Chemical mapping of a 207-nucleotide RNA with DMS and 2A3. For DMS, 4,436 sequencing reads were counted. DMS adducts were read by reverse transcription with MarathonRT. As a SHAPE reagent, 2A3 marks flexible, mostly unpaired nucleotides at the ribose 2'-OH. The RNA was probed in 150 mM KOAc, 10 mM MgCl2 and 150 mM bicine (pH 8.5) at 24 C.
RNA sequence: GGGAACGACUCGAGUAGAGUCGAAAACCACGUCCUGCAGCAAAGCCACCAGGAACUGCAGAGGGACAGAGGAGGGUGAAGGGUCUCACUAGAAAUUUACACAAAGUGGUCCCUGUCGCCCAGCGGCAGCUCAUGGUCAUGCUGGAGUCAUGUGGCCAAAUUCUAUUCGAUUCGUCGAAUAGAAUUUAAAAGAAACAACAACAACAAC
Reactivity to DMS in 0.01 (KOAc 150mM, MgCl2 10mM, bicine 150mM(pH8.5), 24C), signal-to-noise 2, nucleotides 027 to 156: c010c010a070c030g020u010c030c010u010g000c000a030g000c030a040a120a140g010c030c030a130c040c000a080g030g010a050a050c010u010g010c030a090g020a140g030g040g030a210c060a120g000a070g020g080a180g020g010g050u000g020a300a060g000g020g000u010c040u000c040a030c000u000a100g000a090a090a140u010u000u000a110c180a100c050a060a110a100g010u000g010g000u000c010c020c000u010g010u000c020g030c020c010c020a060g020c050g030g000c000a070g040c000u000c020a000u000g010g000u000c030a170u000g000c010u000g000g010a130g000u000c040a080u000g010u010g010g000c030c080
Reactivity to 2A3 in 0.01 (KOAc 150mM, MgCl2 10mM, bicine 150mM(pH8.5), 24C), signal-to-noise 5, nucleotides 027 to 156: c000c000a010c010g020u030c000c010u090g120c000a010g000c000a050a010a140g050c060c040a050c020c040a060g010g060a040a040c000u000g000c010a030g050a140g150g110g020a040c090a070g140a050g130g040a080g010g010g020u010g020a010a000g070g000g020u000c100u080c240a010c000u020a030g180a030a160a080u270u300u300a150c120a020c040a060a140a000g010u010g000g010u030c010c000c000u080g220u070c000g000c000c000c000a010g010c010g050g000c010a010g010c000u020c020a030u050g000g020u030c000a040u030g000c010u020g020g060a010g010u050c070a040u080g000u020g030g000c010c010